[RMDB]
RNA sequence: GGGAACGACUCGAGUAGAGUCGAAAAUCGUCGAGCACUUCUCCAGGCGUUGCCGUGCGGUGCGCGUGGUGCCGUUCGACCCACACCUCGAAGAAGGCGCCGAAAUCGCGCUGGAUCGGUUGCGGCGGCCAUAAGGCUGGUUCGCCAGCCUUAUGGCAAAAGAAACAACAACAACAAC
Reactivity to 2A3 in 0.01 (KOAc 150mM, MgCl2 10mM, bicine 150mM(pH8.5), 24C), signal-to-noise 3, nucleotides 027 to 126: u040c030g030u010c010g000a030g050c030a000c040u090u040c040u040c030c030a040g050g060c020g050u090u210g030c000c020g110u200g060c170g020g040u010g000c020g020c030g070u130g020g010u030g020c020c000g050u010u060c020g030a040c000c020c020a110c000a030c010c020u050c050g040a090a070g080a060a030g100g000c010g000c000c000g060a120a090a040u090c030g000c020g000c030u060g020g040a080u050c030g000g000u040u060g000c000g060g010c040g050
Reactivity to DMS in 0.01 (KOAc 150mM, MgCl2 10mM, bicine 150mM(pH8.5), 24C), signal-to-noise 3, nucleotides 027 to 126: u010c070g010u000c010g020a090g020c030a080c090u000u000c070u000c010c050a090g000g010c010g010u000u010g030c040c020g030u000g020c110g030g020u000g010c000g010c060g030u010g000g010u000g010c110c040g020u000u000c020g030a040c040c030c070a110c130a090c080c110u000c040g000a060a060g010a190a110g000g010c000g000c000c030g010a030a060a080u010c050g010c020g010c040u010g000g000a070u010c020g010g000u010u010g020c040g000g000c030g000
This 177-nucleotide RNA was probed chemically with 2A3 and DMS. Values cover nucleotides 27 to 126. High DMS reactivity at an A or C suggests that its Watson-Crick edge is free. For DMS, 3,707 sequencing reads were counted. 2A3 adducts were read by reverse transcription with SuperScript II with manganese. DMS adducts were read by reverse transcription with MarathonRT. Source: RMDB library OK2TRN, as collected in RNAgym.